[RMDB]
RNA sequence: GGGAACGACUCGAGUAGAGUCGAAAACUCUGUACAGGAAUCUGACAGCGAUUCCGAUUUGUCUUCCGAAGGCACGAUGAUUAUGAUGACGUCCGAAGAAUGUCAGAAAAACGAACAGCAUAUCCGCCAAGUUUUCCUUCUUCGGAAGGAAAACUUGAAAAGAAACAACAACAACAAC
Reactivity to 2A3 in 0.01 (KOAc 150mM, MgCl2 10mM, bicine 150mM(pH8.5), 24C), signal-to-noise 3, nucleotides 027 to 126: c000u060c010u010g080u070a090c020a140g060g020a010a030u000c000u060g080a060c020a040g120c130g050a060u000u040c010c000g020a030u070u080u290g000u000c010u040u040c030c020g080a130a050g070g030c120a000c110g080a060u190g040a050u090u290a090u300g080a070u040g020a000c020g030u000c010c020g040a010a060g020a070a050u020g000u000c000a010g150a070a100a000a010a000c020g010a060a050c010a000g010c030a030u010a090u220c050c020g000c100
Reactivity to DMS in 0.01 (KOAc 150mM, MgCl2 10mM, bicine 150mM(pH8.5), 24C), signal-to-noise 2, nucleotides 027 to 126: c090u000c000u030g000u030a130c230a130g000g000a090a040u060c010u000g050a160c080a050g060c240g000a110u020u000c000c010g000a070u050u010u050g000u000c050u000u000c000c080g030a140a080g000g020c080a030c260g020a110u050g000a160u000u000a230u000g000a140u000g020a070c030g030u000c000c130g000a000a020g000a050a040u000g000u050c040a120g010a070a070a050a140a140c090g010a090a060c020a090g010c050a160u030a060u000c030c010g010c110